[RMDB]
RNA sequence: GGGAACGACUCGAGUAGAGUCGAAAAGGAGUUGAGACUGGUGUGUGUUUAGUGGAUUAUCUGAUCAGCACAUGUGUGACAGUGUUGAUCACAAGUCAUUGCCAGCUCUGUUCAUUUUCUUCCCUGGCGUGGUGCCUUCUUUCGAGAAGGCACCACGAAAAGAAACAACAACAACAAC
Reactivity to 2A3 in 0.01 (KOAc 150mM, MgCl2 10mM, bicine 150mM(pH8.5), 24C), signal-to-noise 2, nucleotides 027 to 126: g050g010a000g000u070u030g060a050g010a190c000u010g100g010u090g020u020g000u090g000u000u100u230a100g030u060g010g140a120u040u240a020u290c090u000g000a000u000c020a000g000c000a020c070a200u000g060u050g070u110g030a020c000a040g000u030g020u000u020g000a000u040c000a000c000a010a010g010u000c000a010u060u260g020c010c000a010g000c000u000c000u000g130u000u020c020a020u050u040u040u000c040u000u000c000c000c020u000g130g000